Structure probing data (DMS and 2A3) for a 177-nucleotide construct.
Source: RMDB library OK1LIB, as collected in RNAgym.
Values cover nucleotides 27 to 126.
[RMDB]
RNA sequence: GGGAACGACUCGAGUAGAGUCGAAAAGAAUACUUUUAGUACAAGCGAGUACACGCAGUAUACUGCUACUUGUGUGAGAAUACUUUUAGUACAAGCGAGUACACGCUGUAUACUGCCACUUGUGUGAUAUGUGGAAGAGCUUCGGCUCUUCCACAUAAAAAGAAACAACAACAACAAC
Reactivity to DMS in 0.01 (KOAc 150mM, MgCl2 10mM, bicine 150mM(pH8.5), 24C), signal-to-noise 1, nucleotides 027 to 126: g010a110a110u040a000c040u000u000u000u140a150g020u050a050c160a130a110g000c020g000a130g000u000a020c130a120c300g000c000a100g000u000a000u020a000c010u000g030c000u000a000c000u000u040g000u010g010u000g020a300g000a100a180u000a000c000u000u020u050u010a000g070u000a050c030a120a290g000c000g000a000g000u030a140c210a070c020g000c000u000g020u010a010u000a000c000u000g000c010c140a100c000u000u000g000u000g030u000g000a060
Reactivity to 2A3 in 0.01 (KOAc 150mM, MgCl2 10mM, bicine 150mM(pH8.5), 24C), signal-to-noise 1, nucleotides 027 to 126: g170a010a010u250a090c000u040u200u090u220a040g000u000a000c000a110a070g000c010g090a000g080u200a060c160a000c110g000c000a000g000u000a020u000a020c050u050g000c000u000a000c030u030u000g020u080g000u090g110a110g130a080a000u000a070c030u010u000u160u300a000g000u040a000c000a050a000g000c010g000a000g000u100a000c120a090c100g020c040u070g000u000a000u000a010c000u000g000c020c000a000c000u090u000g000u000g000u010g100a020